[RMDB]
RNA sequence: GGGAACGACUCGAGUAGAGUCGAAAAGAGUAAGGCGGCCACAGCAGAAGCGUUCAUGUCGCAGCCGCUGUCAGAUUCUGGUGAAUCUGCGAAUUCUGCUGAAGAGCACGGAAUAGGACCGUGCAAACCUAUACUAUCCAUUCGUGGAUAGUAUAGGAAAAGAAACAACAACAACAAC
Reactivity to DMS in 0.01 (KOAc 150mM, MgCl2 10mM, bicine 150mM(pH8.5), 24C), signal-to-noise 3, nucleotides 027 to 126: g010a140g010u040a090a090g030g000c020g010g030c000c210a100c010a000g000c000a020g000a000a020g000c040g020u010u020c120a160u020g020u040c020g020c010a180g010c000c020g020c000u010g000u040c010a000g000a010u000u010c000u010g040g050u070g000a020a000u010c020u000g000c050g000a030a020u000u000c000u030g000c010u000g010a180a060g000a160g000c010a000c000g010g010a100a130u030a190g000g010a080c000c010g000u000g010c000a020a040a080
Reactivity to 2A3 in 0.01 (KOAc 150mM, MgCl2 10mM, bicine 150mM(pH8.5), 24C), signal-to-noise 9, nucleotides 027 to 126: g130a040g120u190a170a090g030g000c000g000g000c020c040a110c010a040g000c000a000g000a010a010g000c010g040u110u170c230a120u290g180u290c020g000c010a000g000c000c000g000c000u000g000u000c000a000g000a010u000u020c030u230g210g030u300g080a000a000u000c000u000g000c000g010a000a010u010u000c000u010g000c000u000g010a060a010g040a000g030c000a000c000g010g060a070a090u180a220g080g080a050c000c000g000u000g000c000a010a010a000
Chemical mapping of a 177-nucleotide RNA with DMS and 2A3. The RNA was probed in 150 mM KOAc, 10 mM MgCl2 and 150 mM bicine (pH 8.5) at 24 C. DMS adducts were read by reverse transcription with MarathonRT.